An RNA of 177 nucleotides, treated with DMS and 2A3 and read out base by base. The reactions ran in a buffer of 150 mM KOAc, 10 mM MgCl2 and 150 mM bicine (pH 8.5), at 24 C.
RNA sequence: GGGAACGACUCGAGUAGAGUCGAAAAACGCGAUGCAUUGCUGAAACCGCUGUCGACUGUGGCGGGCAUCGUCGAAAGACGCCAUACCCUGCCCAUCCUGGCGAACAUCCUGAUGCGCAAAGAGGGAUAGCGGUAUUAUAUUCGUAUAAUACCGCUAAAAAGAAACAACAACAACAAC
Reactivity to DMS in 0.01 (KOAc 150mM, MgCl2 10mM, bicine 150mM(pH8.5), 24C), signal-to-noise 9, nucleotides 027 to 126: a090c130g010c060g020a050u010g000c060a100u010u010g010c090u000g000a080a090a190c070c020g020c040u010g010u000c080g010a070c200u010g010u010g020g010c030g000g000g010c030a020u000c010g020u000c020g010a100a100a140g000a050c020g010c130c200a050u000a080c020c010c010u010g020c010c010c030a100u000c030c040u000g010g010c030g010a060a080c100a060u000c030c030u000g000a070u010g010c060g010c090a050a070a080g010a120g010g000g010a210
Reactivity to 2A3 in 0.01 (KOAc 150mM, MgCl2 10mM, bicine 150mM(pH8.5), 24C), signal-to-noise 5, nucleotides 027 to 126: a010c050g000c030g020a020u050g020c050a060u040u220g040c050u120g060a130a030a030c030c010g020c030u040g100u130c030g040a130c090u100g040u110g090g000c030g010g010g000c010a060u300c030g010u000c000g020a030a020a020g030a010c020g030c050c000a030u060a080c010c000c030u080g000c000c000c000a020u020c000c030u030g020g000c010g020a040a020c010a050u040c000c010u050g030a040u100g030c030g000c060a050a030a090g090a060g020g040g010a010

As a SHAPE reagent, 2A3 marks flexible, mostly unpaired nucleotides at the ribose 2'-OH. It was measured as part of the RMDB library OK2TST. The DMS profile rests on 15,160 reads.